Structure probing data (2A3 and DMS) for a 177-nucleotide construct. It was measured as part of the RMDB library M2PK50. Reactivities are given for positions 27 through 126. The 2A3 profile rests on 1,881 reads. DMS adducts were read by reverse transcription with MarathonRT.
[RMDB]
RNA sequence: GGGAACGACUCGAGUAGAGUCGAAAAUAGGUUGAAUUCGUUCAACCUACAGGCAAGCAAGCAGCGCAACGAGACAACGCGAUAAUAAGAUAGCGCAUGCUGAUACAUCGGUCUUCGGACCGAUGAACAAGUGUGACCCAUUCGUGGGUCACACUUGAAAAGAAACAACAACAACAAC
Reactivity to 2A3 in 0.01 (KOAc 150mM, MgCl2 10mM, bicine 150mM(pH8.5), 24C), signal-to-noise 2, nucleotides 027 to 126: u020a010g010g000u020u020g000a010a000u080u100c190g030u090u010c000a000a010c000c010u020a030c010a020g080g000c000a020a070g000c020a010a040g000c040a030g010c020g000c020a010a080c030g060a020g050a070c040a080a050c050g050c020g090a040u080a260a050u140a220a020g100a140u160a060g070c010g000c020a050u030g000c000u000g000a010u010a170c020a000u010c010g010g000u030c010u040u050c170g040g000a000c000c000g000a000u000g010a000a010
Reactivity to DMS in 0.01 (KOAc 150mM, MgCl2 10mM, bicine 150mM(pH8.5), 24C), signal-to-noise 3, nucleotides 027 to 126: u010a000g000g010u000u000g010a010a010u000u040c260g040u000u000c000a000a000c000c000u000a000c130a080g020g010c100a170a120g030c100a170a090g030c020a070g000c000g000c020a110a150c120g000a070g010a070c240a060a100c110g000c080g020a090u000a090a080u020a060a080g040a100u010a080g000c000g010c010a060u000g000c020u000g000a120u010a130c020a010u000c010g000g000u000c000u000u000c150g040g000a000c000c000g010a000u000g000a120a120